The data come from the RNA Mapping Database (RMDB), library TTRDEL. Structure probing data (DMS and 2A3) for a 177-nucleotide construct. For DMS, 13,406 sequencing reads were counted. For DMS the reverse transcriptase was MarathonRT. Reactivities are given for positions 27 through 126.
RNA sequence: GGGAACGACUCGAGUAGAGUCGAAAAGAUAUGGACAAGCCAACAGCCGUAUGUCGGAAACGACAUGACGGACAUGGCUAGUCCUAAGUCAAAGAUAAGUUUGAAUGUUCGCAUUCAAACUUAUCAACAUAUCCUGUGUGUUCGCACACAGGAUAUGAAAAGAAACAACAACAACAAC
Reactivity to DMS in 0.01 (KOAc 150mM, MgCl2 10mM, bicine 150mM(pH8.5), 24C), signal-to-noise 8, nucleotides 027 to 126: g000a030u000a300u010g000g000a010c000a130a040g010c000c000a030a060c260a180g000c010c000g010u000a010u000g010u000c000g010g000a090a050a120c000g010a020c000a000u000g010a010c000g010g000a050c070a140u000g000g010c000u000a080g010u000c000c000u000a020a060g010u000c020a110a120a130g000a010u000a000a000g010u000u000u000g000a010a010u000g000u010u010c270g020c010a010u000u000c000a000a000a000c000u000u000a000u000c000a100a190
Reactivity to 2A3 in 0.01 (KOAc 150mM, MgCl2 10mM, bicine 150mM(pH8.5), 24C), signal-to-noise 6, nucleotides 027 to 126: g010a010u060a030u120g000g010a000c020a040a010g000c010c010a070a040c100a260g060c000c010g000u010a000u000g000u000c010g030g020a070a050a030c010g010a010c000a010u030g200a030c010g000g030a020c010a040u030g000g000c000u010a000g000u000c000c000u000a080a020g030u030c060a200a020a000g010a000u010a010a000g000u000u010u000g010a020a000u020g030u090u160c300g000c110a000u000u000c000a000a000a000c000u000u000a000u000c000a000a000